[RMDB]
Chemical mapping of a 207-nucleotide RNA with DMS and 2A3. Values cover nucleotides 27 to 156. The reactions ran in a buffer of 150 mM KOAc, 10 mM MgCl2 and 150 mM bicine (pH 8.5), at 24 C. DMS adducts were read by reverse transcription with MarathonRT.
RNA sequence: GGGAACGACUCGAGUAGAGUCGAAAAUAGCGAAGUAGGAUUUUAUGCGUCAAGUGUUCACAGGCUGGGGAGUCGCCGUGGAACGAAAAGCAGAAAGCGUGCUGCUUACGAUAUAAUUUCCGCACCCAUAAGAAGUCUCUGUUCGCAGAGACUUCAAUCGGACAAUAUACUUCGGUAUAUUGUCCGAAAAAGAAACAACAACAACAAC
Reactivity to DMS in 0.01 (KOAc 150mM, MgCl2 10mM, bicine 150mM(pH8.5), 24C), signal-to-noise 1, nucleotides 027 to 156: u000a100g010c050g000a060a060g000u000a140g050g030a110u000u030u000u010a040u000g010c030g000u000c040a030a220g060u000g020u000u010c020a080c040a000g020g000c030u010g000g010g010g010a120g020u000c000g030c050c030g000u000g030g010a010a040c020g010a300a030a030a010g000c030a010g000a060a120a210g010c130g030u000g010c020u000g000c000u010u000a070c050g010a110u010a050u010a090a080u000u000u000c020c010g000c100a110c010c000c000a160u010a120a170g000a030a030g030u000c010u000c000u000g000u000u010c300g080c000a020g010a020g010a010c000u000u010c000a040a140
Reactivity to 2A3 in 0.01 (KOAc 150mM, MgCl2 10mM, bicine 150mM(pH8.5), 24C), signal-to-noise 3, nucleotides 027 to 156: u140a010g040c030g050a080a000g060u110a060g020g040a010u030u000u030u030a030u090g020c010g010u030c080a060a040g010u040g040u210u030c040a040c070a130g010g040c020u100g020g030g020g020a060g080u090c040g010c030c030g000u030g010g000a000a020c010g010a020a090a010a020g000c030a000g050a130a130a030g110c070g070u100g030c010u000g010c000u010u010a010c030g020a000u010a000u010a170a040u030u020u000c000c000g010c010a050c010c000c000a030u070a090a080g000a000a010g000u000c000u000c000u010g040u030u040c140g000c070a000g000a000g000a010c000u000u000c000a010a000